[RMDB]
RNA sequence: GGGAACGACUCGAGUAGAGUCGAAAAUCCCAGGGAGGCUCACCUUGUAGCAUUGUGAUCUUUGGAAGCAUCAAGGGAGGCACAAGAUUUCUCUGGGUGAACUGGAAAAGACUUGGGCUGGGCAUCAGUUACUCUGCCAAUUCGUUGGCAGAGUAACAAAAGAAACAACAACAACAAC
Reactivity to 2A3 in 0.01 (KOAc 150mM, MgCl2 10mM, bicine 150mM(pH8.5), 24C), signal-to-noise 2, nucleotides 027 to 126: u000c020c000c000a000g070g010g000a060g030g050c010u000c030a120c040c060u020u010g060u080a050g030c090a090u020u180g100u120g110a130u070c110u130u090u210g170g060a150a060g060c030a040u060c030a010a050g050g000g000a050g080g040c040a020c010a050a070g040a070u070u070u010c060u000c020u020g000g000g000u050g010a060a020c050u050g120g040a010a040a030a070g050a050c020u060u090g000g020g020c000u030g000g010g070c000a030u000c020a070
Reactivity to DMS in 0.01 (KOAc 150mM, MgCl2 10mM, bicine 150mM(pH8.5), 24C), signal-to-noise 3, nucleotides 027 to 126: u000c000c000c010a120g010g010g010a100g000g010c040u000c080a140c050c000u010u000g010u000a190g040c070a110u010u010g010u010g000a080u010c050u010u010u020g020g010a090a120g000c060a160u000c030a050a050g000g000g000a110g010g000c020a070c120a080a080g010a190u000u010u000c040u010c020u010g000g020g010u000g000a080a100c080u000g000g000a050a040a060a080g010a050c060u000u000g020g010g000c040u000g000g000g020c040a060u000c070a110
Conditions: 150 mM KOAc, 10 mM MgCl2 and 150 mM bicine (pH 8.5), 24 C.
This 177-nucleotide RNA was probed chemically with 2A3 and DMS.
Source: RMDB library OK2TST, as collected in RNAgym.
For DMS, 2,209 sequencing reads were counted.